This 177-nucleotide RNA was probed chemically with 2A3. Source: RMDB library RFM100, as collected in RNAgym. Conditions: 150 mM KOAc, 10 mM MgCl2 and 150 mM bicine (pH 8.5), 24 C. The 2A3 profile rests on 586 reads.

RNA sequence: GGGAACGACUCGAGUAGAGUCGAAAAUGCAGAUUAAUGCUGCAUUUUAUGACAUAAAAUACAGCAGCGAUAGUUAGUAGUUAUGAUAGCCUUCGGGAAGCCAGAGCAAAUACUAAAGCUGCAGUGCACAGCAUUCGGCUUUCGAGCCGAAUGCUGUAAAAGAAACAACAACAACAAC
Reactivity to 2A3 in 0.01 (KOAc 150mM, MgCl2 10mM, bicine 150mM(pH8.5), 24C), signal-to-noise 2, nucleotides 027 to 126: u000g000c010a000g050a100u190u090a260a130u300g040c000u000g000c000a000u000u000u000u010a230u020g020a040c040a000u250a060a020a090a000u170a000c030a030g000c000a000g000c000g000a040u010a040g090u000u000a010g010u010a040g000u170u090a030u110g100a200u200a010g010c000c000u000u080c130g060g000g020a000a000g060c020c000a000g040a000g000c010a010a010a010u070a000c000u000a000a000a000g010c000u000g010c010a000g000u030g050c070